[RMDB]
Structure probing data (2A3 and DMS) for a 177-nucleotide construct. Source: RMDB libraries RFM100 and RFMREP, as collected in RNAgym. 2A3 adducts were read by reverse transcription with SuperScript II with manganese. DMS adducts were read by reverse transcription with MarathonRT. High 2A3 reactivity points to a flexible backbone, as in loops and unpaired stretches.
RNA sequence: GGGAACGACUCGAGUAGAGUCGAAAAACGCUAUAGCCUAGUACGCUAGGCUAUAGCGAGCCUCGUGGCCUGGUCCCCACUAUUUGAGAAGAGUCACAUCUCGGAGGUGAGGACCGCCUCGUGGUAAGACCACUAAACUAUUCGUAGUUUAGUGGUCAAAAGAAACAACAACAACAAC
Reactivity to 2A3 in 0.01 (KOAc 150mM, MgCl2 10mM, bicine 150mM(pH8.5), 24C), signal-to-noise 9, nucleotides 027 to 126: a000c010g010c000u000a000u000a000g000c000c000u010a000g010u040a020c250g020c100u000a000g000g010c000u000a000u000a000g000c000g000a000g000c000c000u000c000g010u010g000g010c060c190u090g010g000u010c010c050c110c000a010c010u300a300u130u020u020g030a020g010a080a030g090a080g230u190c090a070c020a230u010c010u010c010g020g000a020g000g010u000g010a020g000g000a000c000c000g000c000c000u000c010g000u020g000g000u070a120a030
Reactivity to DMS in 0.01 (KOAc 150mM, MgCl2 10mM, bicine 150mM(pH8.5), 24C), signal-to-noise 5, nucleotides 027 to 126: a110c020g020c000u000a000u000a000g000c000c000u000a010g010u010a120c300g030c010u000a000g000g020c000u000a010u000a010g010c000g010a030g000c010c010u000c010g000u000g000g000c040c110u050g010g000u000c000c000c010c000a010c010u000a090u020u010u000g000a010g000a020a080g010a260g010u040c210a110c230a090u000c000u000c000g020g010a050g010g010u010g000a060g000g000a010c000c010g000c000c010u000c010g000u000g020g010u000a080a110